[RMDB]
RNA sequence: GGGAACGACUCGAGUAGAGUCGAAAAGUGGUCGUCGGUCCGGCGCUGGACACGUUGCCGACGUUGGCCGGUGGCCCGUUCGACCUGGUGUUCAUCGACGCCGACAAAGAGAACAACGUCGCAUAUAGCUCAAGGACAGCUUCGGCUGUCCUUGAGCAAAAGAAACAACAACAACAAC
Reactivity to 2A3 in 0.01 (KOAc 150mM, MgCl2 10mM, bicine 150mM(pH8.5), 24C), signal-to-noise 1, nucleotides 027 to 126: g210u200g000g000u000c000g010u000c010g010g010u160c160c000g050g030c000g000c000u050g000g050a090c120a090c210g250u150u250g000c010c000g030a080c000g000u000u000g000g000c000c000g010g000u000g000g020c000c000c000g000u010u040c020g000a000c000c000u010g070g010u080g000u050u040c020a060u010c030g020a010c040g000c010c000g050a030c080a000a090a000g110a000g000a040a000c050a040a010c000g060u080c050g000c080a010u190a000u120a290